The data come from the RNA Mapping Database (RMDB), library OK1LIB. An RNA of 177 nucleotides, treated with 2A3 and DMS and read out base by base.

RNA sequence: GGGAACGACUCGAGUAGAGUCGAAAAGGCUAUCCAGAGAGAGCAGGUGAGUUUAGGCAAUCUGGAAAACCAUUAGCAAUACCUGCAUCUAGUGUUCCAGAACCAAAUGAAUUCAAUGAAGAAGCCAAUGCGUGAACGUAUUCGUACGUUCACGCAUAAAAGAAACAACAACAACAAC
Reactivity to 2A3 in 0.01 (KOAc 150mM, MgCl2 10mM, bicine 150mM(pH8.5), 24C), signal-to-noise 2, nucleotides 027 to 126: g050g000c000u000a000u060c000c050a000g040a020g000a030g000a010g130c010a000g020g020u060g060a170g000u000u020u190a040g000g000c050a100a020u000c000u010g000g010a010a030a010a030c050c020a060u040u050a050g000c100a090a000u040a220c000c000u010g000c000a090u000c000u050a020g030u050g020u120u000c000c000a060g010a300a300c010c000a030a000a100u180g000a030a030u010u090c050a000a140u150g150a120a070g080a060a000g010c080c000a020
Reactivity to DMS in 0.01 (KOAc 150mM, MgCl2 10mM, bicine 150mM(pH8.5), 24C), signal-to-noise 1, nucleotides 027 to 126: g000g010c000u000a080u010c010c010a060g000a000g000a070g000a000g000c070a030g010g000u000g000a070g000u020u000u020a060g000g000c090a090a120u000c000u000g010g050a000a010a190a230c180c050a010u000u000a030g020c130a000a040u010a160c080c070u040g020c050a160u000c080u000a050g040u000g000u000u000c030c040a000g000a050a090c030c020a020a010a100u000g050a000a000u010u050c080a030a130u000g000a070a110g000a100a020g060c000c000a130
Values cover nucleotides 27 to 126.
DMS adducts were read by reverse transcription with MarathonRT.